[RMDB]
RNA sequence: GGGAACGACUCGAGUAGAGUCGAAAAUUUAAUCCCAACAAAGGGCCAAGAGGGACGGCAACUUGGCCCAAGCCCAAAGUGCGAGACUCUAAAGGGAUGAGUCGUUCCCAACUCGCUCACAAUAUAAACUUGUUAACUAGUUCGCUAGUUAACAAGUAAAAGAAACAACAACAACAAC
Reactivity to DMS in 0.01 (KOAc 150mM, MgCl2 10mM, bicine 150mM(pH8.5), 24C), signal-to-noise 3, nucleotides 027 to 126: u020u010u010a100a160u000c000c000c000a080a130c170a040a120a140g010g010g020c020c010a010a020g010a140g010g020g020a030c090g010g000c040a140a080c000u010u000g000g020c010c000c000a010a040g000c010c000c020a070a090a060g020u000g020c020g000a170g000a030c030u000c010u010a020a080a130g020g000g010a100u000g000a010g000u000c000g010u000u010c000c020c000a020a010c070u010c090g020c030u010c040a080c170a080a050u010a090u000a050a130
Reactivity to 2A3 in 0.01 (KOAc 150mM, MgCl2 10mM, bicine 150mM(pH8.5), 24C), signal-to-noise 2, nucleotides 027 to 126: u000u000u020a040a060u020c000c000c000a000a020c030a000a050a030g000g000g000c000c000a010a000g000a050g050g070g070a040c040g050g080c040a050a030c010u000u010g000g000c000c000c000a000a000g010c000c000c010a110a130a010g090u110g050c020g020a050g000a040c000u000c000u030a070a070a050g110g030g010a050u150g000a010g000u000c000g000u000u020c000c000c000a000a010c000u010c020g030c010u060c030a060c070a110a020u080a010u040a170a200
The record gives the reactivity of an RNA of 177 nucleotides to DMS and 2A3. The RNA was probed in 150 mM KOAc, 10 mM MgCl2 and 150 mM bicine (pH 8.5) at 24 C. For DMS, 2,427 sequencing reads were counted.